[RMDB]
RNA sequence: GGGAACGACUCGAGUAGAGUCGAAAAGGCUAUCGACAGGAUAGGUGUGAGAUGUCGUUGCACUCCGAGUUUCAGCAUGGACGGACUCGUUAAACAAGUCUAUGUACCAAUAGAUGCAGACGAUUAUUCGUAUGCAAUGGCUGCCUGAUUAGCACAACCUACCUAAUGAGUUCGCUCAUUAGGUAGGAAAAGAAACAACAACAACAAC
Reactivity to DMS in 0.01 (KOAc 150mM, MgCl2 10mM, bicine 150mM(pH8.5), 24C), signal-to-noise 3, nucleotides 027 to 156: g010g040c020u000a070u010c040g020a130c060a070g020g010a110u000a040g030g030u000g020u000g020a140g000a140u000g020u010c020g000u000u000g000c030a110c040u000c100c020g000a040g010u000u000u000c000a100g010c010a040u010g030g000a030c000g020g000a020c010u000c010g020u010u010a020a050a060c040a020a000g010u000c020u000a030u000g040u000a120c060c040a040a180u000a110g010a160u000g010c020a030g020a020c030g000a080u000u000a240u000u010c010g040u000a050u000g010c000a040a100u000g010g010c050u000g000c020c030u010g020a120u000u010a100g000c060a060c080a070a110
Reactivity to 2A3 in 0.01 (KOAc 150mM, MgCl2 10mM, bicine 150mM(pH8.5), 24C), signal-to-noise 6, nucleotides 027 to 156: g050g000c020u030a010u090c050g070a040c070a070g080g030a080u080a060g080g040u040g030u060g070a090g010a120u070g040u040c040g000u050u060g040c040a030c060u030c050c010g010a010g010u000u020u040c010a020g000c020a020u030g000g010a010c010g010g030a010c010u010c020g070u050u060a030a050a020c020a040a020g000u000c000u000a050u050g020u030a120c010c010a070a040u080a100g120a090u060g000c000a000g020a050c030g010a040u100u100a080u280u140c010g010u020a010u020g020c000a010a050u020g030g000c020u020g030c000c010u080g030a140u080u120a010g010c020a020c010a060a060